This 177-nucleotide RNA was probed chemically with 2A3 and DMS. The reactions ran in a buffer of 150 mM KOAc, 10 mM MgCl2 and 150 mM bicine (pH 8.5), at 24 C. 2A3 adducts were read by reverse transcription with SuperScript II with manganese. Source: RMDB libraries RFM100 and RFMREP, as collected in RNAgym.

RNA sequence: GGGAACGACUCGAGUAGAGUCGAAAAUUAUUUCUCCACUUUCAAGAGCUUGGGCUUGGCCCAAAUCUUAGACUGUCCAAUUCUGCCUCUAUUACCAAUUUAAAUCUAUGGCUUGAACCUGUGCACUGAUAAUGAGACACUUCGGUGUCUCAUUAUCAAAAGAAACAACAACAACAAC
Reactivity to 2A3 in 0.01 (KOAc 150mM, MgCl2 10mM, bicine 150mM(pH8.5), 24C), signal-to-noise 4, nucleotides 027 to 126: u120u030a040u000u040u000c030u000c000c000a050c020u030u080u050c040a060a000g000a040g120c090u050u020g030g010g000c060u090u200g140g020c010c000c000a010a020a010u000c000u030u050a090g010a060c020u060g040u090c040c020a050a060u070u010c030u050g030c010c000u010c030u060a100u140u100a110c020c040a070a070u120u130u110a160a130a050u050c040u090a080u160g010g010c000u010u040g040a050a050c000c040u020g010u070g030c050a030c070u010
Reactivity to DMS in 0.01 (KOAc 150mM, MgCl2 10mM, bicine 150mM(pH8.5), 24C), signal-to-noise 1, nucleotides 027 to 126: u050u040a130u010u040u030c040u000c000c050a120c050u090u010u000c080a060a060g000a010g000c140u010u000g000g000g010c000u000u080g110g040c000c010c020a020a070a000u030c010u000u020a110g000a060c140u000g000u000c000c050a040a150u020u010c010u000g020c030c000u000c050u000a030u010u010a100c060c010a010a110u010u000u000a040a060a090u000c040u010a070u000g000g010c080u000u020g000a030a070c110c030u000g030u020g010c100a070c150u030